The record gives the reactivity of an RNA of 177 nucleotides to DMS and 2A3. The reactions ran in a buffer of 150 mM KOAc, 10 mM MgCl2 and 150 mM bicine (pH 8.5), at 24 C. For DMS the reverse transcriptase was MarathonRT. It was measured as part of the RMDB library TTRINS.
RNA sequence: GGGAACGACUCGAGUAGAGUCGAAAAGAUAUGGAUGUGUGCGAAGCCUACUAGUGCGAAGAACUAGUCUAAGCUCGGAAACGAGCUUAGACUAGGGAGCACAUAGGCGUAGACACAUCCUAAGUCACAACAUUAUUCCCUUCGGGGAAUAAUGUUGAAAAGAAACAACAACAACAAC
Reactivity to DMS in 0.01 (KOAc 150mM, MgCl2 10mM, bicine 150mM(pH8.5), 24C), signal-to-noise 2, nucleotides 027 to 126: g000a070u020a300u000g000g000a020u010g010u000g010u010g010c020g000a090a300g000c000c000u000a010c210u010a190g020u010g000c000g000a160a210g030a170a130c000u000a000g010u000c000u000a000a000g020c000u000c000g030g000a070a110a270c010g000a030g020c000u000u000a010g000a000c000u000a000g000g000g000a110g000c000a000c000a150u000a020g010g010c000g000u000a100g000a050c000a000c010a010u000c000c000u000a010a050g020u000c020a240
Reactivity to 2A3 in 0.01 (KOAc 150mM, MgCl2 10mM, bicine 150mM(pH8.5), 24C), signal-to-noise 2, nucleotides 027 to 126: g050a040u100a060u200g000g000a010u010g020u000g010u200g300c050g230a260a000g000c020c000u070a130c090u160a130g010u000g020c050g150a240a040g020a060a040c000u000a000g010u050c000u000a000a020g030c000u000c000g040g020a110a060a070c000g000a000g070c000u000u000a000g000a000c000u000a000g020g010g000a020g000c000a000c000a010u000a010g020g000c000g010u010a010g010a000c010a000c000a000u010c000c000u000a060a000g050u000c030a000